[RMDB]
RNA sequence: GGGAACGACUCGAGUAGAGUCGAAAAUGGACUUUUUACAGUUCCUACUUAUCCGGUUUUAACGCUGUUUUAUUGGCGCAAAGGUUUACGGAUAAACAACUAAUGAUUAAACCUUUUGUGUGCGAAAAUUGGACGUUUAGGUUCGCCUAAACGUCAAGUACAACAUAUGGUUCGCCAUAUGUUGUACAAAAGAAACAACAACAACAAC
Reactivity to DMS in 0.01 (KOAc 150mM, MgCl2 10mM, bicine 150mM(pH8.5), 24C), signal-to-noise 2, nucleotides 027 to 156: u020g010g000a060c030u000u020u000u010u000a130c090a110g000u020u000c010c030u010a120c080u000u000a030u000c010c000g000g000u000u000u000u010a200a060c030g000c010u000g010u010u010u010u010a150u000u040g020g010c010g030c020a020a030a040g060g020u000u010u000a140c030g020g000a050u000a010a010a130c060a050a150c090u000a070a080u010g010a210u010u000a020a020a010c010c000u010u000u020u000g010u010g010u000g050c020g000a070a060a100a240u000u010g000g010a000c000g030u000u000u000a000g020g010u000u010c300g000c010c000u000a000a010a000c010g020u010c000a000a060
Reactivity to 2A3 in 0.01 (KOAc 150mM, MgCl2 10mM, bicine 150mM(pH8.5), 24C), signal-to-noise 5, nucleotides 027 to 156: u120g030g010a020c030u070u070u090u110u250a110c160a060g010u070u080c000c000u020a040c040u040u010a000u000c000c000g020g030u010u010u000u060a040a030c020g010c020u010g180u130u120u060u160a160u170u260g020g000c010g010c030a030a000a000g000g000u000u010u020a010c000g000g000a010u040a040a070a010c060a050a020c040u150a110a090u130g100a040u140u160a020a000a020c000c000u020u020u100u080g090u020g020u040g050c080g090a060a050a080a150u150u160g110g000a000c000g000u000u000u010a010g010g020u020u020c160g040c030c000u000a000a000a000c000g000u000c000a000a000